An RNA of 177 nucleotides, treated with 2A3 and DMS and read out base by base. High 2A3 reactivity points to a flexible backbone, as in loops and unpaired stretches. It was measured as part of the RMDB library 15KREP.
RNA sequence: GGGAACGACUCGAGUAGAGUCGAAAACCAAGUUCAGUUAACAGACAAAUACUGCAGUGUUAAUGUAGUAGCUUGGCUUUACGCAGCAAUACUUAAUGGUUGCGCUUGGUUUGUAAAACCUAAUCGCCAGCCAGAGUAUGUUCGCAUACUCUGGCUGAAAAGAAACAACAACAACAAC
Reactivity to 2A3 in 0.01 (KOAc 150mM, MgCl2 10mM, bicine 150mM(pH8.5), 24C), signal-to-noise 2, nucleotides 027 to 126: c000c000a020a000g030u050u070c090a010g010u100u030a080a010c000a080g030a040c020a030a010a000u040a010c000u010g000c010a030g020u030g050u300u200a100a080u030g020u030a010g000u000a010g050c110u020u010g000g000c000u060u050u010a020c050g000c030a020g020c010a020a080u060a260c040u070u300a120a010u180g040g010u000u010g000c000g000c010u000u010g000g010u000u030u010g050u050a020a010a000a050c010c000u000a020a040u060c030g030c050
Reactivity to DMS in 0.01 (KOAc 150mM, MgCl2 10mM, bicine 150mM(pH8.5), 24C), signal-to-noise 2, nucleotides 027 to 126: c020c000a010a020g000u010u010c140a170g000u000u000a000a050c220a010g010a030c020a000a010a050u000a000c020u000g020c000a030g000u010g030u020u020a060a100u010g020u010a020g000u000a000g010c140u010u000g010g000c010u000u000u000a030c030g040c090a080g030c000a020a040u000a080c120u000u010a140a100u010g000g020u000u000g000c040g000c010u000u000g000g010u010u000u010g000u000a030a040a180a110c010c010u000a030a060u000c100g000c170
Background:
The 2A3 profile rests on 1,589 reads. Conditions: 150 mM KOAc, 10 mM MgCl2 and 150 mM bicine (pH 8.5), 24 C. For DMS the reverse transcriptase was MarathonRT.